[RMDB]
RNA sequence: GGGAACGACUCGAGUAGAGUCGAAAAACGCCGCCUCCAGGUCGGUGCGCCAGACGUUGCGCCCGUCGACGACCCCGGCCACCAGCGUCUUGCCGGCCAGCUCGGGUACCCCGGCCACCGAGGUGUCGACUUGCUUAGAAUUCGUUCUAAGCAAGUCAAAAGAAACAACAACAACAAC
Reactivity to DMS in 0.01 (KOAc 150mM, MgCl2 10mM, bicine 150mM(pH8.5), 24C), signal-to-noise 4, nucleotides 027 to 126: a130c130g010c090c020g010c000c000u000c020c100a210g020g010u000c020g020g010u000g000c050g010c020c040a070g000a040c140g020u000u000g010c110g000c060c020c060g000u000c110g000a050c090g010a110c060c070c030c080g020g000c040c050a070c050c050a100g010c060g000u000c030u000u000g020c080c060g010g000c020c030a080g000c020u000c030g000g020g000u000a090c040c060c000c010g000g020c010c020a090c220c100g000a020g010g010u000g010u000c080
Reactivity to 2A3 in 0.01 (KOAc 150mM, MgCl2 10mM, bicine 150mM(pH8.5), 24C), signal-to-noise 3, nucleotides 027 to 126: a000c040g010c020c020g020c010c000u000c030c020a020g030g000u030c000g000g010u040g010c050g000c000c010a030g000a050c100g030u050u030g010c060g020c080c020c000g030u050c040g030a060c050g060a070c020c010c010c020g050g000c030c010a070c020c000a030g010c010g030u020c040u050u130g030c000c000g020g000c010c000a010g020c010u020c020g050g000g000u050a050c010c000c000c030g020g000c010c010a090c030c030g010a010g000g030u040g060u050c030